This 177-nucleotide RNA was probed chemically with DMS. Source: RMDB library OK2TRN, as collected in RNAgym. For DMS, 553 sequencing reads were counted. DMS adducts were read by reverse transcription with MarathonRT. The reactions ran in a buffer of 150 mM KOAc, 10 mM MgCl2 and 150 mM bicine (pH 8.5), at 24 C.
RNA sequence: GGGAACGACUCGAGUAGAGUCGAAAAUGGUAAGUUGAAAGUCAUACCUGAUCCAAUACGAUUCUUUGAAAAAUUGUCAAUUCCAAUUAGACAAGAAGAUUUCGUAAACGGAAGCGUAGUCAAAGAACAGCCUAAUAGGCUUCGGCCUAUUAGGCUGAAAAGAAACAACAACAACAAC
Reactivity to DMS in 0.01 (KOAc 150mM, MgCl2 10mM, bicine 150mM(pH8.5), 24C), signal-to-noise 1, nucleotides 027 to 126: u020g020g020u000a030a070g020u000u000g010a060a120a160g010u010c020a080u000a040c050c020u000g000a210u030c000c010a050a300u000a000c010g000a030u010u000c010u020u000u000g010a110a070a050a080a150u000u000g000u040c010a050a100u000u010c300c270a130a080u010u000a100g000a070c030a010a110g000a030a050g000a010u000u000u000c000g010u010a000a150a150c290g000g010a060a040g000c140g010u010a020g000u000c120a070a040a240g000a100a160